[RMDB]
RNA sequence: GGGAACGACUCGAGUAGAGUCGAAAAUAAAAUGUUUGAUUCCUUUGUUAAUAGUUUCGUCUCGCUGUAUAAUGUCACACGCGAUAAGUUGGAAAAACUUAUCUCUACUGCUCGUGAUGGCGUAAGGGUACGUACUGCUUCGGCAGUACGAAAAGAAACAACAACAACAAC
Reactivity to 2A3 in 0.01 (KOAc 150mM, MgCl2 10mM, bicine 150mM(pH8.5), 24C), signal-to-noise 2, nucleotides 027 to 129: u150a000a050a000a000u130g140u180u090u210g000a050u030u000c000c000u040u000u000g000u010u030a130a120u190a170g050u020u000u010c040g010u000c110u000c000g080c000u020g070u070a100u070a190a140u120g060u010c000a000c000a000c060g030c000g060a010u000a000a020g020u010u030g240g000a300a000a000a000a000c000u000u000a000u000c000u010c000u060a210c010u100g080c000u030c060g020u000g080a120u040g030g050c000g000u000a000a000g100g000g000u010a000
Reactivity to DMS in 0.01 (KOAc 150mM, MgCl2 10mM, bicine 150mM(pH8.5), 24C), signal-to-noise 4, nucleotides 027 to 129: u080a070a070a160a120u060g010u030u010u020g040a000u060u000c060c000u050u090u010g010u020u000a070a170u030a220g030u010u000u050c010g040u010c010u010c040g030c080u030g030u050a060u070a060a090u030g070u040c050a030c000a090c200g080c250g010a020u000a000a010g020u020u020g030g000a080a080a090a070a020c020u040u000a040u020c030u030c140u020a180c130u020g010c010u040c020g030u060g010a030u020g030g100c000g050u030a020a040g020g090g000u110a130
Source: RMDB library 15KLIB, as collected in RNAgym.
An RNA of 170 nucleotides, treated with 2A3 and DMS and read out base by base.
Conditions: 150 mM KOAc, 10 mM MgCl2 and 150 mM bicine (pH 8.5), 24 C.